RNA sequence: GGGAACGACUCGAGUAGAGUCGAAAAGCGGGGCUUGAAACGCUGGUAGCGCGCACGCCCGGCGAAGAAGUUCGCAUACGCGGUGUGCUGGUGCCGAAGUGUCUGCUGCAACGGCACGCUCGACACCUAGAACAUACCGUAUUCGUACGGUAUGUAAGCGGUAGUCUGUAUUCGUACAGACUACCGCAAAAGAAACAACAACAACAAC
Reactivity to 2A3 in 0.01 (KOAc 150mM, MgCl2 10mM, bicine 150mM(pH8.5), 24C), signal-to-noise 1, nucleotides 027 to 156: g000c020g000g040g020g000c000u030u000g080a130a120a000c000g000c000u010g030g130u120a110g020c050g000c010g050c110a020c010g010c020c010c010g000g000c040g000a020a050g020a030a000g150u060u040c000g000c050a000u000a160c100g000c030g020g000u000g000u010g000c070u020g000g010u000g000c000c030g000a090a050g020u010g020u040c030u060g140c160u120g070c030a140a020c010g010g020c010a000c020g020c040u030c020g000a020c020a020c010c020u050a040g000a060a000c000a000u000a000c010c010g000u010a020u010u120c190g000u040a000c000g000g000u050a020u050g000u060a060a080